[RMDB]
RNA sequence: GGGAACGACUCGAGUAGAGUCGAAAAGGCGUCUUCGCUGCCUCGGCCGCCUUGCACUGACCGGUAGCCGCCGUAAUAGCGGCAUUGUUCCCAUAAAAGGAUGUGGGUGUGGGUGACGAAGUAGCAGGCUAUACCUGCUAUUCGUAGCAGGUAUAGCAAAAGAAACAACAACAACAAC
Reactivity to DMS in 0.01 (KOAc 150mM, MgCl2 10mM, bicine 150mM(pH8.5), 24C), signal-to-noise 5, nucleotides 027 to 126: g010g010c090g010u000c030u000u000c120g020c010u000g010c020c010u000c040g010g010c100c020g000c010c020u000u010g030c050a050c040u000g010a110c050c050g000g000u000a120g010c000c010g020c000c050g010u000a130a110u010a100g000c010g000g010c000a070u010u010g010u000u000c000c000c010a140u010a060a070a120a120g000g010a100u000g020u000g010g010g010u000g020u000g010g000g010u000g010a090c040g010a040a040g010u000a030g020c020a170g010
Reactivity to 2A3 in 0.01 (KOAc 150mM, MgCl2 10mM, bicine 150mM(pH8.5), 24C), signal-to-noise 8, nucleotides 027 to 126: g080g040c060g090u040c060u110u070c080g010c010u020g000c010c010u010c000g030g020c100c010g000c010c000u040u200g020c020a020c020u080g120a060c010c020g010g030u030a040g010c000c010g000c000c000g010u050a070a030u100a130g010c010g010g000c010a000u010u140g010u020u030c010c000c000a010u140a020a160a010a010g130g020a100u140g030u130g210g000g030u030g020u040g020g000g000u020g010a010c010g000a020a000g000u020a010g010c030a010g070
Chemical mapping of a 177-nucleotide RNA with DMS and 2A3. Source: RMDB library OK2TRN, as collected in RNAgym. For 2A3 the reverse transcriptase was SuperScript II with manganese. DMS adducts were read by reverse transcription with MarathonRT. For 2A3, 20,993 sequencing reads were counted. The reactions ran in a buffer of 150 mM KOAc, 10 mM MgCl2 and 150 mM bicine (pH 8.5), at 24 C.